[RMDB]
RNA sequence: GGGAACGACUCGAGUAGAGUCGAAAAUUAUGCUGCUGGUUAUUUUAGCCUGCAUUCCGGGGAUUAUUGCCCAGACUUACUUCUUUGGCUAUGGCAGCCUAAUCCAGGUUGCACUGGCUAUCAUUACCCUAGCCAGAAUUUUCGAAUUCUGGCUAGGAAAAGAAACAACAACAACAAC
Reactivity to 2A3 in 0.01 (KOAc 150mM, MgCl2 10mM, bicine 150mM(pH8.5), 24C), signal-to-noise 1, nucleotides 027 to 126: u060u010a000u190g060c000u030g040c020u060g010g060u130u040a290u110u300u060u100a010g010c000c010u000g040c010a020u140u120c060c070g140g090g030g000a040u040u040a030u190u300g080c000c000c020a000g010a080c010u040u070a020c020u170u250c090u160u220u140g000g050c010u020a230u280g010g000c020a010g020c000c000u030a100a060u010c120c010a020g020g000u030u000g000c040a080c100u020g000g060c010u010a020u090c020a060u000u110a020c000
Reactivity to DMS in 0.01 (KOAc 150mM, MgCl2 10mM, bicine 150mM(pH8.5), 24C), signal-to-noise 1, nucleotides 027 to 126: u020u010a070u000g000c110u000g030c080u000g000g000u000u000a070u020u000u030u000a050g010c000c000u040g000c040a090u000u010c090c020g020g020g040g020a100u020u000a110u000u000g020c020c000c070a110g000a150c160u020u020a080c100u000u000c080u000u000u000g030g020c000u000a040u000g010g030c020a010g060c030c040u010a070a040u010c250c140a080g010g000u000u000g000c030a070c070u000g010g010c020u000a030u000c140a050u010u000a070c210

Conditions: 150 mM KOAc, 10 mM MgCl2 and 150 mM bicine (pH 8.5), 24 C. This 177-nucleotide RNA was probed chemically with 2A3 and DMS. It was measured as part of the RMDB library OK2TRN. Reactivities are given for positions 27 through 126. 2A3 adducts were read by reverse transcription with SuperScript II with manganese.